Record summary:
This 177-nucleotide RNA was probed chemically with DMS. The data come from the RNA Mapping Database (RMDB), library OK2TRN.
RNA sequence: GGGAACGACUCGAGUAGAGUCGAAAAAUUUGUGAACACUGUGGAUAUCAUUUGAAAAUGAGCAGUUCAGAUAGAAUCGAACUUUCGAUUGAUCCGGGUACUUGGAAUCCUAUGGAUGAAGACAUGAUGCGAAAACGGAAUUCGUUCCGUUUUCGCAAAAAGAAACAACAACAACAAC
Reactivity to DMS in 0.01 (KOAc 150mM, MgCl2 10mM, bicine 150mM(pH8.5), 24C), signal-to-noise 1, nucleotides 027 to 126: a070u000u000u010g060u000g000a150a060c100a060c120u000g010u020g030g000a130u020a130u000c030a040u000u000u020g020a060a020a130a110u020g000a080g010c150a030g010u010u000c050a100g000a120u030a020g010a060a240u020c010g020a030a260c150u000u000u000c000g000a040u000u000g000a030u000c020c010g000g000g000u000a050c070u010u000g010g020a110a090u000c010c060u010a000u000g000g000a060u010g000a110a070g000a070c060a060u010g010a140